[RMDB]
Source information: An RNA of 177 nucleotides, treated with 2A3 and DMS and read out base by base. The 2A3 profile rests on 15,121 reads.
RNA sequence: GGGAACGACUCGAGUAGAGUCGAAAAUUAUGCUGUGUCUAGUGCCUUCUGGUUAUUCACCCACAUUCCAAUGGCGGGUUUGGUACGAAUGUAUAAUUUGUUAGCAUGCCUUUGGCUUUUACGCAAGCACGUUAAAUUAGUUCGCUAAUUUAACGUGAAAAGAAACAACAACAACAAC
Reactivity to 2A3 in 0.01 (KOAc 150mM, MgCl2 10mM, bicine 150mM(pH8.5), 24C), signal-to-noise 7, nucleotides 027 to 126: u070u030a040u130g010c030u020g010u020g030u080c030u050a050g060u020g060c010c000u070u090c050u070g040g020u090u060a060u090u080c030a040c010c010c000a020c000a050u130u030c020c020a050a050u040g030g000c000g030g010g000u080u060u070g050g020u030a010c020g030a070a040u050g070u030a070u020a200a070u030u030u040g060u030u030a030g020c030a030u050g010c000c000u040u030u070g030g000c000u060u090u070u070a060c090g010c030a020a030g050
Reactivity to DMS in 0.01 (KOAc 150mM, MgCl2 10mM, bicine 150mM(pH8.5), 24C), signal-to-noise 9, nucleotides 027 to 126: u010u010a060u010g010c020u000g010u000g010u010c100u000a090g010u010g000c020c010u000u010c110u000g010g010u000u000a090u010u010c120a120c030c010c010a080c120a090u010u010c080c090a070a070u000g010g010c060g010g000g010u000u010u000g010g020u000a030c030g000a040a040u000g010u010a060u010a060a060u000u000u000g000u010u000a070g020c060a050u000g000c020c010u000u000u010g010g010c150u000u000u000u010a070c150g020c140a090a110g010
For DMS the reverse transcriptase was MarathonRT. The DMS profile rests on 23,562 reads.